[RMDB]
RNA sequence: GGGAACGACUCGAGUAGAGUCGAAAAAGUAGAGUUAAUUCAUGGUGACAGUCCAGUUGACAUUCCUGACGAACUUCUUGGGUAGAAAGCUUCAUCAAUAUGGCAGUUGUAAAUAAGAUAGGUGGGAAUCUUUUGCCUUGUUCGCAAGGCAAAAGAUAAAAGAAACAACAACAACAAC
Reactivity to DMS in 0.01 (KOAc 150mM, MgCl2 10mM, bicine 150mM(pH8.5), 24C), signal-to-noise 1, nucleotides 027 to 126: a110g030u000a100g000a080g010u000u010a080a090u010u000c090a040u030g010g010u030g000a050c090a080g020u010c070c060a090g000u000u000g020a090c090a090u000u000c100c030u000g000a130c110g000a030a030c080u000u050c040u000u010g020g000g000u000a060g020a040a070a080g020c060u000u000c010a050u000c070a030a080u000a080u000g010g030c020a040g020u000u010g010u000a080a140a090u000a050a110g000a080u000a060g020g000u000g000g000g010a090

The data come from the RNA Mapping Database (RMDB), library OK2TRN. An RNA of 177 nucleotides, treated with DMS and read out base by base. The RNA was probed in 150 mM KOAc, 10 mM MgCl2 and 150 mM bicine (pH 8.5) at 24 C. DMS adducts were read by reverse transcription with MarathonRT.